[RMDB]
RNA sequence: GGGAACGACUCGAGUAGAGUCGAAAAACCAGAUUGAAAUGUACCGGCUAGAUGAAGACUAUUUGAUCAGCUAGUUACUUCUAUCGAAUAAAGUGGCCAAAACCAACUCAUUAUAGGUCAUGAUAUAGUACAAGACCAAGUUCGCUUGGUCUUGUACAAAAGAAACAACAACAACAAC
Reactivity to 2A3 in 0.01 (KOAc 150mM, MgCl2 10mM, bicine 150mM(pH8.5), 24C), signal-to-noise 1, nucleotides 027 to 126: a020c010c020a000g040a020u000u070g020a070a050a040u140g000u060a000c040c000g040g030c020u030a150g020a000u010g050a020a070g050a190c120u130a210u260u090u100g040a060u030c020a010g000c000u070a100g050u010u070a040c000u000u090c000u060a000u020c000g020a010a010u090a060a100a010g000u020g000g010c000c060a000a010a050a100c040c010a120a120c030u020c110a070u120u200a050u130a140g000g030u000c000a010u010g000a050u000a010u040a100
Reactivity to DMS in 0.01 (KOAc 150mM, MgCl2 10mM, bicine 150mM(pH8.5), 24C), signal-to-noise 1, nucleotides 027 to 126: a110c010c000a110g040a080u000u000g010a010a040a040u000g030u010a000c040c020g040g000c010u000a170g070a020u000g010a000a020g000a130c220u020a020u000u030u000g010a060u000c060a050g000c020u020a020g000u000u000a030c070u000u000c020u010a040u000c020g010a090a090u020a030a130a300g040u000g000g000c000c010a020a060a110a120c130c110a080a080c090u020c120a030u010u010a080u000a080g000g000u000c030a020u000g000a100u000a090u000a090